[RMDB]
RNA sequence: GGGAACGACUCGAGUAGAGUCGAAAAGAAAAUUAGCAUUCGUCGUGUAACCAACCGGGCUUUUGACGAAUGCAUCGUUAACAAUCCAGGAGAGCCUGGAAGCCCGUAUCGCAGGUAAAGAAAGAAAAUGGUAUCGUACUUUCGAGUACGAUACCAUAAAAGAAACAACAACAACAAC
Reactivity to 2A3 in 0.01 (KOAc 150mM, MgCl2 10mM, bicine 150mM(pH8.5), 24C), signal-to-noise 2, nucleotides 027 to 126: g100a010a000a000a020u300u300a010g000c000a000u000u000c000g050u000c020g030u040g100u190a100a150c020c000a000a080c090c000g000g000g000c000u070u130u100u300g020a000c010g000a000a000u000g000c000a000u000c030g000u000u050a000a050c000a240a170u000c040c000a000g000g010a210g040a040g080c000c000u000g000g000a000a000g000c000c000c000g000u040a050u110c100g000c030a030g000g010u040a040a080a020g130a040a040a020g160a000a030a030
Reactivity to DMS in 0.01 (KOAc 150mM, MgCl2 10mM, bicine 150mM(pH8.5), 24C), signal-to-noise 1, nucleotides 027 to 126: g000a030a020a030a080u000u050a080g020c000a000u000u000c000g000u000c030g000u050g000u030a090a120c080c080a190a160c300c060g000g000g000c000u000u040u010u020g060a000c000g030a010a000u020g020c080a040u060c100g050u070u040a120a210c090a100a030u060c000c010a100g050g040a300g000a200g010c000c000u000g000g020a010a000g020c000c000c000g000u040a120u000c070g000c060a030g000g000u000a080a120a000g050a030a260a100g000a020a150a000

The data come from the RNA Mapping Database (RMDB), library OK1LIB. Structure probing data (2A3 and DMS) for a 177-nucleotide construct. The 2A3 profile rests on 1,097 reads. DMS adducts were read by reverse transcription with MarathonRT.